[RMDB]
RNA sequence: GGGAACGACUCGAGUAGAGUCGAAAACUUACUAUUUGUAAAAAAUGAGAACUGGGGCAAAUAUGUCACGAAGGAAUCCUUGCAAAUUUGAAAUUCGAGGUCAUUGCUUGAAUGGUAAGAGGUGUCAGCUGACCUGAGAAUUCGUUCUCAGGUCAGCAAAAGAAACAACAACAACAAC
Reactivity to 2A3 in 0.01 (KOAc 150mM, MgCl2 10mM, bicine 150mM(pH8.5), 24C), signal-to-noise 1, nucleotides 027 to 126: c000u000u010a010c040u080a190u040u000u000g080u190a000a050a220a170a120a120u240g040a050g040a110a000c110u150g000g000g000g010c000a000a160a100u180a170u010g000u010c040a030c080g120a110a000g000g000a030a030u000c000c000u020u060g170c070a010a050a290u180u180u050g180a260a230a050u160u030c030g030a040g000g200u070c010a110u020u040g030c040u110u070g000a030a020u000g000g000u000a000a000g000a000g000g100u000g040u000c000a060
The data come from the RNA Mapping Database (RMDB), library OK1LIB. Chemical mapping of a 177-nucleotide RNA with 2A3. Reactivities are given for positions 27 through 126. The 2A3 profile rests on 356 reads.